This 177-nucleotide RNA was probed chemically with DMS and 2A3. DMS adducts were read by reverse transcription with MarathonRT. For DMS, 1,248 sequencing reads were counted.
[RMDB]
RNA sequence: GGGAACGACUCGAGUAGAGUCGAAAAGAACCUCUGGCCCGAGGUCGCUCGUCAGGACUGGACCACUGGACGCAGCACUCUGGUCACCAUAGCGGGUUGUUCUGCACAUGUCCCGUGGCUAGGUAUAUAGUGGUCGAACAUUCGUGUUCGACCACUAAAAAGAAACAACAACAACAAC
Reactivity to DMS in 0.01 (KOAc 150mM, MgCl2 10mM, bicine 150mM(pH8.5), 24C), signal-to-noise 1, nucleotides 027 to 126: g040a050a100c040c110u040c000u000g000g000c000c000c120g010a010g080g000u000c130g000c020u020c000g000u010c030a160g000g040a160c070u000g060g000a030c020c030a000c010u000g000g040a040c010g110c080a020g000c000a120c000u010c000u010g070g060u000c010a000c060c150a080u080a140g060c010g010g000g020u000u040g000u000u000c080u000g000c010a070c190a060u050g000u010c000c000c080g030u000g000g000c030u010a030g000g030u030a010u100a040
Reactivity to 2A3 in 0.01 (KOAc 150mM, MgCl2 10mM, bicine 150mM(pH8.5), 24C), signal-to-noise 1, nucleotides 027 to 126: g030a000a010c000c010u000c010u030g030g000c000c000c000g010a070g010g090u080c000g050c000u020c010g020u010c010a000g060g110a040c020u060g010g040a050c010c010a040c030u050g030g010a000c090g070c000a010g020c000a000c030u050c000u050g090g000u100c000a020c010c120a100u200a000g170c040g040g000g000u050u000g080u100u080c020u080g000c080a070c010a070u030g010u010c030c000c040g020u060g040g000c040u100a080g000g060u020a070u010a010